[RMDB]
The data come from the RNA Mapping Database (RMDB), library OK1LIB. Structure probing data (2A3 and DMS) for a 177-nucleotide construct. For DMS the reverse transcriptase was MarathonRT. For 2A3 the reverse transcriptase was SuperScript II with manganese.
RNA sequence: GGGAACGACUCGAGUAGAGUCGAAAAUGAGAAUACUUUUAGUACAAGCGAGUACACGCAGUAUAGUGCUACUUGUGUGAGAAUACUUUUAGUACAAGCGAGUACACGCAGUAUACUGCCACUUGUGUCUUUUUGGCCUAUUCGUAGGCCAAAAAGAAAAAGAAACAACAACAACAAC
Reactivity to 2A3 in 0.01 (KOAc 150mM, MgCl2 10mM, bicine 150mM(pH8.5), 24C), signal-to-noise 3, nucleotides 027 to 126: u100g020a010g090a080a020u120a230c040u060u070u100u070a090g020u070a000c020a070a060g030c040g040a020g090u080a030c090a000c060g000c000a000g000u010a000u130a050g180u010g000c020u000a000c000u010u010g020u010g030u060g080a060g110a110a030u040a120c000u100u090u130u130a000g000u050a010c020a070a000g000c000g010a000g030u020a000c120a000c090g010c020a020g080u010a030u010a000c010u000g000c000c010a050c010u000u060g020u000g010
Reactivity to DMS in 0.01 (KOAc 150mM, MgCl2 10mM, bicine 150mM(pH8.5), 24C), signal-to-noise 2, nucleotides 027 to 126: u000g010a130g000a180a160u030a020c020u000u000u020u000a100g030u020a030c120a090a160g000c020g000a100g000u000a040c070a200c210g110c030a030g000u030a060u020a060g030u000g000c010u010a010c000u000u000g020u000g040u000g020a190g010a200a030u000a010c000u000u000u060u020a080g000u000a000c070a080a270g000c040g000a050g010u040a080c250a070c130g010c050a020g030u000a030u000a000c050u000g010c050c110a080c020u050u000g000u000g010